[RMDB]
RNA sequence: GGGAACGACUCGAGUAGAGUCGAAAACGCGGUGGGCGGCAGGUUUUUUUUCAGAAUAAUUUCAUCAUAGCCGUUCACAUAGCCAAAGUAAUUAUGUUCUAUCGGAUAGCUGUUCACCGAAGAGGCGUACUUUUCCACUGUUCGCAGUGGAAAAGUAAAAAGAAACAACAACAACAAC
Reactivity to 2A3 in 0.01 (KOAc 150mM, MgCl2 10mM, bicine 150mM(pH8.5), 24C), signal-to-noise 2, nucleotides 027 to 126: c050g000c020g000g000u020g000g000g010c000g010g000c030a040g030g040u000u020u000u000u010u000u080u080c090a030g090a010a000u080a130a080u060u050u140c000a100u030c060a080u110a040g000c000c000g000u000u000c000a000c000a010u080a000g000c020c010a110a050a000g010u030a030a210u120u050a120u120g140u090u090c030u040a230u020c000g010g000a040u040a140g000c040u070g010u190u190c000a000c020c000g010a060a020g000a010g030g010c030g010
Reactivity to DMS in 0.01 (KOAc 150mM, MgCl2 10mM, bicine 150mM(pH8.5), 24C), signal-to-noise 2, nucleotides 027 to 126: c150g020c120g000g010u000g010g000g000c000g000g010c020a150g010g000u010u000u000u050u010u000u000u010c110a130g000a070a110u000a000a040u000u010u000c090a080u050c060a100u020a110g010c020c000g030u000u000c030a030c040a080u030a030g020c030c100a090a010a080g010u000a070a120u020u020a070u000g010u000u000c050u010a110u010c060g010g000a040u010a050g000c030u010g000u030u000c020a100c000c000g010a010a040g000a070g000g000c060g030
Description
An RNA of 177 nucleotides, treated with 2A3 and DMS and read out base by base. The RNA was probed in 150 mM KOAc, 10 mM MgCl2 and 150 mM bicine (pH 8.5) at 24 C. 2A3 adducts were read by reverse transcription with SuperScript II with manganese.